[RMDB]
RNA sequence: GGGAACGACUCGAGUAGAGUCGAAAACAGAUCACGUUCGCGUGAUCUGGAAUGAUUUCUCGUAGAGCCACGAGAAGUAAAUUAAAGAAAGCUCACUGAGAACCACCCGCGGGUUCGCCCGCGGGAACCAUAAAUCAUGAUUCGUCAUGAUUUAUGGAAAAGAAACAACAACAACAAC
Reactivity to DMS in 0.01 (KOAc 150mM, MgCl2 10mM, bicine 150mM(pH8.5), 24C), signal-to-noise 5, nucleotides 027 to 126: c010a010g000a010u000c000a000c000g020u000u010c170g030c020g010u000g000a010u000c000u000g000g000a080a080u010g000a120u010u000u000c000u000c000g010u000a120g000a020g000c010c160a020c010g000a010g000a010a030g000u000a020a020a040u000u000a030a030a040g010a040a030a160g010c000u000c000a210c220u010g010a130g010a100a100c180c200a120c020c000c000g030c000g000g000g010u000u020c210g010c000c000c010g010c010g010g000g000a000a010
Reactivity to 2A3 in 0.01 (KOAc 150mM, MgCl2 10mM, bicine 150mM(pH8.5), 24C), signal-to-noise 5, nucleotides 027 to 126: c000a000g010a000u010c000a000c010g010u060u040c180g010c010g100u000g000a000u000c000u000g000g030a040a070u140g070a020u010u020u010c010u000c010g000u020a050g000a010g030c070c190a020c010g010a020g000a030a010g050u110a020a070a080u110u040a030a020a060g180a040a070a010g010c000u100c010a030c060u130g090a110g050a230a040c030c020a030c020c000c000g000c010g010g030g020u040u060c190g050c030c000c010g000c000g000g000g000a000a000